[RMDB]
RNA sequence: GGGAACGACUCGAGUAGAGUCGAAAAACAAGGAAGAAUAGUACAUAGUUAUAAAUACUUGGAGAGUGAGGUGUAAUAUGGGGGCAGCUGAUUUUUGGGGUUUCAUAUAUGUAGUUUCAAGAUUAGCUGAUUUAGCAGCAUUCGUGCUGCUAAAUCAAAAAGAAACAACAACAACAAC
Reactivity to 2A3 in 0.01 (KOAc 150mM, MgCl2 10mM, bicine 150mM(pH8.5), 24C), signal-to-noise 2, nucleotides 027 to 126: a010c110a090a030g090g040a050a030g030a090a140u160a030g070u090a030c020a060u120a050g060u050u000a080u060a090a060a040u130a130c020u030u020g030g020a010g060a040g110u050g000a000g020g030u050g000u070a040a070u090a070u180g010g010g000g000g030c030a000g040c030u010g000a130u000u030u000u050u090g000g000g020g020u010u050u080c140a050u150a000u010a070u240g000u050a060g000u020u000u050c030a010a000g030a080u110u120a010g040c060
Reactivity to DMS in 0.01 (KOAc 150mM, MgCl2 10mM, bicine 150mM(pH8.5), 24C), signal-to-noise 2, nucleotides 027 to 126: a060c050a130a000g000g010a100a050g000a070a050u000a080g010u030a070c070a060u010a030g000u010u070a140u000a080a080a060u020a230c050u000u000g000g000a100g000a000g000u000g000a010g000g010u040g020u020a100a050u000a090u000g030g000g000g000g030c070a040g000c000u030g000a030u000u000u000u000u000g020g020g010g000u000u000u000c050a020u070a080u000a080u000g000u020a010g000u000u000u000c010a000a100g030a080u000u010a060g010c110

Background: This 177-nucleotide RNA was probed chemically with 2A3 and DMS. Reactivities are given for positions 27 through 126. DMS adducts were read by reverse transcription with MarathonRT. The DMS profile rests on 2,023 reads. The 2A3 profile rests on 615 reads. Values are in units of 0.01, from 0 to 300, in steps of 10. It was measured as part of the RMDB library RFM100.